Source: RMDB library OK3TST, as collected in RNAgym. The record gives the reactivity of an RNA of 207 nucleotides to DMS and 2A3. For DMS, 5,097 sequencing reads were counted. The RNA was probed in 150 mM KOAc, 10 mM MgCl2 and 150 mM bicine (pH 8.5) at 24 C.
RNA sequence: GGGAACGACUCGAGUAGAGUCGAAAAAAGUUAUCAUGAGUGGCAAGUCGAAACCGCAGAUGGAACAACGCGAUGGCUCUCAACAAAUAUCUGGCCUGGUCGAGAUAAUGAUGGACGGUGUGUCUAUACAGUCUCACGAGAUAUCACCGCUCGAAAGUCUUCAUCGUUAAUUCGUUAACGAUGAAGAAAAAGAAACAACAACAACAAC
Reactivity to DMS in 0.01 (KOAc 150mM, MgCl2 10mM, bicine 150mM(pH8.5), 24C), signal-to-noise 3, nucleotides 027 to 156: a050a080g010u000u000a090u010c030a090u000g010a100g010u010g050g020c010a100a140g020u000c090g020a080a110a070c040c000g020c040a090g020a110u000g010g020a100a080c060a070a090c030g000c050g010a130u020g020g010c040u000c050u010c030a070a140c060a080a060a080u000a080u000c030u010g020g020c040c040u010g020g000u000c040g000a110g010a050u000a050a080u000g000a160u010g020g010a020c030g020g020u000g030u010g000u010c010u010a100u020a150c060a140g000u000c050u000c030a160c100g000a090g010a080u000a040u000c040a040c000c010g010c030u010c090g040a070a070a130g030
Reactivity to 2A3 in 0.01 (KOAc 150mM, MgCl2 10mM, bicine 150mM(pH8.5), 24C), signal-to-noise 5, nucleotides 027 to 156: a000a030g110u100u030a100u080c050a060u100g030a020g040u040g030g000c070a110a040g050u060c030g040a080a050a050c030c010g000c040a040g030a100u160g020g020a090a100c070a050a050c110g010c040g130a070u080g060g000c020u030c020u020c050a010a140c040a030a130a010u100a040u040c030u040g060g020c020c020u060g020g050u030c020g020a000g010a070u120a130a090u130g090a020u050g020g020a010c030g050g050u100g020u030g010u010c020u020a070u040a100c050a050g070u040c010u010c070a050c060g050a050g000a020u050a010u120c010a020c010c020g030c030u000c010g110a080a080a060g060